This 177-nucleotide RNA was probed chemically with 2A3 and DMS. The 2A3 profile rests on 1,487 reads. Values cover nucleotides 27 to 126. Source: RMDB library OK2TRN, as collected in RNAgym.
RNA sequence: GGGAACGACUCGAGUAGAGUCGAAAAUGGUACUCUAGUCUAGCAUGCAUGGCGCGUACGGUACCAGUGUCUAGAGUACCGACCAUGCUAGACUAGCAUGGGUACAUGGAUCAGACUGACGAUCCGGGCUGAUACCGAGUUUCGACUCGGUAUCAGCAAAAGAAACAACAACAACAAC
Reactivity to 2A3 in 0.01 (KOAc 150mM, MgCl2 10mM, bicine 150mM(pH8.5), 24C), signal-to-noise 2, nucleotides 027 to 126: u090g000g010u010a020c010u050c010u030a060g060u060c000u020a020g020c030a010u020g060c070a120u110g160g000c100g000c030g150u070a210c000g000g000u000a000c010c150a040g210u130g030u110c190u100a090g000a050g050u010a000c000c000g000a010c020c010a000u000g000c000u100a110g020a200c000u000a000g010c000a040u070g000g030g020u030a070c050a140u060g020g000a010u000c030a010g210a280c120u160g050a000c090g000a030u020c000c000g030g100
Reactivity to DMS in 0.01 (KOAc 150mM, MgCl2 10mM, bicine 150mM(pH8.5), 24C), signal-to-noise 1, nucleotides 027 to 126: u020g000g040u000a010c020u000c020u000a080g000u010c010u000a000g000c060a050u010g000c110a150u000g010g000c110g020c090g060u000a130c050g000g000u000a010c000c000a120g020u040g000u000c300u000a130g040a180g010u000a010c000c000g010a040c090c000a000u000g000c000u000a050g010a060c070u000a010g000c300a080u000g000g010g010u000a030c020a100u010g000g000a040u000c000a100g010a170c180u000g000a140c090g000a030u010c070c000g000g000